[RMDB]
Structure probing data (2A3 and DMS) for a 177-nucleotide construct. DMS adducts were read by reverse transcription with MarathonRT. Reactivities are rounded to 0.1 and cut off at 0 and 3. In probing experiments dimethyl sulfate is read out at A N1 and C N3, which are open when not base-paired.

RNA sequence: GGGAACGACUCGAGUAGAGUCGAAAAGUUGCCGACGAACCUUCCAACCUUCCAUACGUCGUUUUCGACAACCUUCCAACCUUCCAAUCUACUCGAGAGGAGGAGGAGGAGGAGGAGGAGGAAUUAACGUUAUAUGAAGGUUCGCCUUCAUAUAACGAAAAGAAACAACAACAACAAC
Reactivity to 2A3 in 0.01 (KOAc 150mM, MgCl2 10mM, bicine 150mM(pH8.5), 24C), signal-to-noise 6, nucleotides 027 to 126: g060u070u070g140c010c000g010a060c030g030a060a070c010c000u050u000c020c050a100a100c040c000u080u020c020c010a070u030a150c040g020u010c010g000u070u020u050u150c020g010a020c010a070a050c010c010u080u040c020c030a080a100c030c020u110u040c020c010a050a060u000c010u040a060c040u030c070g020a030g000a020g050g040a040g000g020a050g020g040a040g020g040a080g040g070a040g030g070a030g030g050a030g010g060a030a040u140u080a130a040
Reactivity to DMS in 0.01 (KOAc 150mM, MgCl2 10mM, bicine 150mM(pH8.5), 24C), signal-to-noise 6, nucleotides 027 to 126: g010u000u000g010c050c030g010a090c070g010a100a070c070c040u000u000c010c040a110a120c080c020u010u000c010c050a120u020a110c170g000u000c020g010u000u000u010u000c010g030a050c050a090a200c040c030u000u000c020c030a090a100c030c030u010u000c020c030a100a240u000c010u010a050c060u000c050g010a030g020a240g000g000a120g000g000a150g000g000a110g020g070a160g000g000a100g010g010a150g000g000a150g000g000a300a060u000u000a040a110